Structure probing data (DMS and 2A3) for a 207-nucleotide construct.
The reactions ran in a buffer of 150 mM KOAc, 10 mM MgCl2 and 150 mM bicine (pH 8.5), at 24 C.
For 2A3 the reverse transcriptase was SuperScript II with manganese.
For DMS, 4,066 sequencing reads were counted.

RNA sequence: GGGAACGACUCGAGUAGAGUCGAAAAGCGACUAGUUCGCUAGUCGCAAAAACCUUUGUGUUGUGGCACGAACUACUCCGAUGAUCAUGGACCCAUUGGGUCCAUGUGAGGAGCGUGGCACAACACUCUGGUAAAUCACAUCCCUUCGGGGAUGUGAGUCAUCACUUAAGUUCGCUUAAGUGAUGACAAAAGAAACAACAACAACAAC
Reactivity to DMS in 0.01 (KOAc 150mM, MgCl2 10mM, bicine 150mM(pH8.5), 24C), signal-to-noise 1, nucleotides 027 to 156: g000c000g000a030c000u010a010g030u000u020c300g040c010u000a040g000u000c010g070c000a000a050a030a110a030c010c020u000u000u010g000u000g010u000u030g020u000g000g010c000a060c030g000a100a280c020u000a080c000u010c000c000g000a270u010g030a130u000c010a030u010g010g010a010c000c000c030a300u010u020g050g030g020u000c000c000a010u010g000u000g000a090g030g010a070g000c020g060u010g000g000c010a040c000a040a010c010a000c010u000c010u010g000g020u000a000a110a250u000c010a030c000a000u000c000c000c000u000u030c300g030g020g030g000a010u000g020u000g000a000
Reactivity to 2A3 in 0.01 (KOAc 150mM, MgCl2 10mM, bicine 150mM(pH8.5), 24C), signal-to-noise 5, nucleotides 027 to 156: g010c000g010a000c000u010a000g030u060u140c240g010c140u010a000g000u020c000g000c010a030a010a010a000a080c010c000u010u000u010g000u000g000u000u000g010u010g070g070c010a000c010g050a190a100c130u130a090c010u210c010c010g300a300u070g010a020u080c000a000u010g000g000a000c010c030c110a300u110u300g010g000g000u000c000c000a000u000g000u000g010a020g000g000a000g000c000g000u010g060g060c000a000c000a000a000c000a000c000u000c000u000g000g000u030a100a070a060u030c000a000c000a000u000c010c000c000u020u060c240g020g000g000g000a000u000g000u000g000a000